This 177-nucleotide RNA was probed chemically with DMS and 2A3. The 2A3 profile rests on 3,636 reads. Values cover nucleotides 27 to 126. Source: RMDB library M2PK90, as collected in RNAgym.

RNA sequence: GGGAACGACUCGAGUAGAGUCGAAAAUAAAAUCGUAGGGCGAGACGAUCGACGUAAAUCGCUCAAACUACUCGAGACCAAAGGAAUACGCUUCGGUAACUCGCUCUAAUCCCGAGCGAUAUAUGAACGUAGGUAACGUAUUCGUACGUUACCUACGAAAAGAAACAACAACAACAAC
Reactivity to DMS in 0.01 (KOAc 150mM, MgCl2 10mM, bicine 150mM(pH8.5), 24C), signal-to-noise 3, nucleotides 027 to 126: u020a080a060a140a160u000c010g000u000a090g010g010g000c030g000a030g000a030c040g010a050u000c030g010a100c060g000u010a060a060a110u000c080g000c040u000c110a110a070a230c070u010a030c050u000c040g000a050g020a090c060c010a070a070a070g020g000a120a070u000a000c070g030c050u000u010c130g010g030u000a120a100c080u000c010g000c000u000c000u020a120a140u000c080c010c040g020a050g000c010g010a050u000a060u000a090u010g000a150a140
Reactivity to 2A3 in 0.01 (KOAc 150mM, MgCl2 10mM, bicine 150mM(pH8.5), 24C), signal-to-noise 3, nucleotides 027 to 126: u040a000a050a000a050u040c020g010u030a030g010g000g000c020g000a010g020a030c030g030a040u070c020g040a050c020g010u040a080a050a100u130c070g020c040u040c070a030a030a060c020u030a010c010u010c020g030a020g030a040c020c010a100a020a030g100g050a120a030u080a090c010g040c070u070u060c020g010g000u010a000a020c010u010c000g000c000u000c020u020a020a060u030c010c020c000g000a010g000c010g010a020u040a010u020a020u120g120a090a020
Conditions: 150 mM KOAc, 10 mM MgCl2 and 150 mM bicine (pH 8.5), 24 C.